[RMDB]
RNA sequence: GGGAACGACUCGAGUAGAGUCGAAAAGAUAUGGAUCUGUCUCACGAGCGACGAUCGGAAAUCGGAAACGAUUUCCGGGAGCUUCGUGAGAGCAGAUCCUAAGUCAAAACUACGCUUCGGCGUAGAAUCGUAGUAACAACUUCGGUUGUUACUACGAAAAAGAAACAACAACAACAAC
Reactivity to DMS in 0.01 (KOAc 150mM, MgCl2 10mM, bicine 150mM(pH8.5), 24C), signal-to-noise 4, nucleotides 027 to 126: g000a080u000a300u010g000g000a010u000c000u000g010u010c000u000c000a000c010g000a040g000c000g010a100c240g000a050u010c010g000g010a000a010a000u000c000g010g000a130a120a260c000g000a020u000u000u000c000c000g030g000g000a070g010c010u000u020c030g030u000g000a010g000a040g010c010a010g000a010u000c000c000u010a020a090g000u000c030a090a070a110a250c000u000a010c000g020c000u000u020c240g010g000c000g010u000a000g000a040a080
Reactivity to 2A3 in 0.01 (KOAc 150mM, MgCl2 10mM, bicine 150mM(pH8.5), 24C), signal-to-noise 5, nucleotides 027 to 126: g030a040u070a070u170g000g010a010u000c000u010g050u050c000u000c010a010c000g020a010g000c010g300a300c030g020a080u020c000g010g000a000a010a000u020c010g000g030a060a040a050c010g000a000u010u000u000c010c020g010g000g000a010g010c010u300u300c040g000u000g010a000g010a000g010c000a000g000a000u000c000c000u010a020a000g000u000c000a000a030a130a200c010u010a010c010g000c020u060u140c300g220g000c000g010u020a000g030a010a070